Overview:
Chemical mapping of a 177-nucleotide RNA with 2A3. It was measured as part of the RMDB library RFM100. Conditions: 150 mM KOAc, 10 mM MgCl2 and 150 mM bicine (pH 8.5), 24 C.
RNA sequence: GGGAACGACUCGAGUAGAGUCGAAAAACCGAGCGUCGUGGCGGGCGCUUGUGAGUCAGCUUCUUGACGGUAGAUAAGUGUGGAUGGAGUGAGAGGAGGAGUCCUGUGUAUGUCGUUGUCAACGUCGCCCUCUUGCCAACUUCGGUUGGCAAGAGGGAAAAGAAACAACAACAACAAC
Reactivity to 2A3 in 0.01 (KOAc 150mM, MgCl2 10mM, bicine 150mM(pH8.5), 24C), signal-to-noise 1, nucleotides 027 to 126: a000c020c010g000a000g010c000g040u030c000g000u020g000g030c030g000g020g020c000g000c040u010u000g010u030g000a000g010u030c060a000g040c060u260u110c030u180u040g030a020c060g020g000u100a070g060a110u110a170a010g030u030g000u130g130g000a060u020g010g000a030g020u080g000a050g000a000g060g040a040g020g020a020g010u060c000c010u050g020u000g060u080a110u150g030u020c070g000u050u000g040u030c110a090a030c120g000u030c050g000